[RMDB]
About this RNA: Structure probing data (2A3 and DMS) for a 177-nucleotide construct. Values cover nucleotides 27 to 126. The DMS profile rests on 1,875 reads.
RNA sequence: GGGAACGACUCGAGUAGAGUCGAAAAGAUGAGAAUACGUGACUUGGUCAGAGGCGGAAAGUCACAAGCACGAACGAUACAGUAGAGUAUCGAGCCGCCAACAGAUGCACGUUGUGAUCGUGCUAGAAAUCCGUCAUCACUUCGGUGAUGACGGAUUAAAAGAAACAACAACAACAAC
Reactivity to 2A3 in 0.01 (KOAc 150mM, MgCl2 10mM, bicine 150mM(pH8.5), 24C), signal-to-noise 2, nucleotides 027 to 126: g180a080u300g030a000g110a150a100u060a060c010g000u000g010a020c050u010u010g000g000u100c060a070g020a000g080g000c000g020g020a020a050a090g010u000c000a000c000a060a000g040c040a000c040g060a080a000c000g000a000u010a000c030a010g280u060a000g160a000g230u000a000u000c010g040a000g010c050c000g000c000c000a030a000c030a070g070a020u170g040c020a000c010g020u040u030g100u030g090a080u070c000g000u000g040c000u030a040g170a000
Reactivity to DMS in 0.01 (KOAc 150mM, MgCl2 10mM, bicine 150mM(pH8.5), 24C), signal-to-noise 2, nucleotides 027 to 126: g020a140u010g020a100g020a250a030u030a000c060g040u000g000a040c020u000u040g000g000u000c110a020g020a130g000g000c000g020g000a070a040a040g020u020c030a020c090a050a070g000c040a030c050g000a120a120c060g000a030u000a060c000a140g000u070a130g000a100g020u000a000u000c000g000a110g020c050c020g020c000c000a070a030c140a130g000a060u030g000c060a080c100g000u000u000g000u010g000a030u000c100g000u020g000c030u000a080g000a020